Structure probing data (2A3 and DMS) for a 177-nucleotide construct. Values cover nucleotides 27 to 126. The data come from the RNA Mapping Database (RMDB), library RFM100. 2A3 adducts were read by reverse transcription with SuperScript II with manganese. For 2A3, 889 sequencing reads were counted.

RNA sequence: GGGAACGACUCGAGUAGAGUCGAAAAUGUAUUUUUUAUUAUUUUGAAAUCAAUUGAGUACAUUUAGAGUGAGAACGAUUGUAUGAAUAGGGUAUACCCAAAAUAUACACGAAAGCAUCGUUGUAAAGAUUAGGAAAAAUUUCGAUUUUUCCUAAUCAAAAGAAACAACAACAACAAC
Reactivity to 2A3 in 0.01 (KOAc 150mM, MgCl2 10mM, bicine 150mM(pH8.5), 24C), signal-to-noise 3, nucleotides 027 to 126: u010g000u010a010u000u020u020u030u030u050a110u110u020a190u060u130u110u160g090a140a100a040u130c030a030a010u110u050g000a010g050u000a010c000a000u020u050u120a080g010a040g150u080g050a050g040a070a020c040g060a080u130u100g040u000a050u050g060a150a070u050a140g000g000g030u060a040u110a200c020c000c000a060a060a000a000u060a000u000a010c070a010c040g050a050a050a040g070c050a020u080c050g000u000u000g020u000a000a050a050
Reactivity to DMS in 0.01 (KOAc 150mM, MgCl2 10mM, bicine 150mM(pH8.5), 24C), signal-to-noise 2, nucleotides 027 to 126: u000g010u000a010u000u010u020u110u030u030a070u090u000a100u070u000u020u030g000a110a160a100u010c110a080a030u010u020g000a070g010u000a020c000a000u000u020u010a070g000a140g000u010g010a070g000a020a040c040g000a060u010u000g000u010a010u000g000a030a150u020a160g000g020g040u020a050u040a030c030c050c210a000a060a180a180u020a030u010a010c030a040c050g010a060a080a160g000c040a010u000c070g020u030u000g020u010a070a110a150